[RMDB]
RNA sequence: GGGAACGACUCGAGUAGAGUCGAAAAGGGAGCGAGUUCGCUCGCUCCCAAACCCGAUGAAGCGGCACUUACGGAGCUUCAUACAUCUAAGAAGUGCAAAAAAAAGCGGUAGCUUCGGCUACCGCAACUACUAUGUUUACUUCGGUAAACAUAGUAGAAAAGAAACAACAACAACAAC
Reactivity to 2A3 in 0.01 (KOAc 150mM, MgCl2 10mM, bicine 150mM(pH8.5), 24C), signal-to-noise 2, nucleotides 027 to 126: g000g010g010a010g000c020g010a010g020u020u040c050g020c050u020c000g000c010u030c000c000c000a000a000a010c010c000c000g010a020u050g000a040a020g020c060g030g010c020a000c020u060u100a040c140g110g070a010g010c020u000u020c000a010u030a020c040a030u090c060u130a110a040g060a080a030g070u050g000c020a020a040a030a010a000a020a100a070g010c020g000g000u000a010g010c000u040u040c220g030g000c000u010a000c000c000g000c010a000a000
Reactivity to DMS in 0.01 (KOAc 150mM, MgCl2 10mM, bicine 150mM(pH8.5), 24C), signal-to-noise 2, nucleotides 027 to 126: g000g020g000a000g030c000g030a000g010u010u010c250g010c020u000c000g000c000u000c000c000c010a000a030a050c000c000c010g020a060u000g000a030a020g010c010g020g050c010a020c010u000u000a300c080g000g000a190g000c000u000u000c010a050u010a100c170a100u000c100u020a060a100g000a060a070g030u000g020c030a010a010a000a050a070a060a090a170g020c000g010g000u000a000g000c000u010u010c180g010g020c000u000a000c010c000g020c000a010a010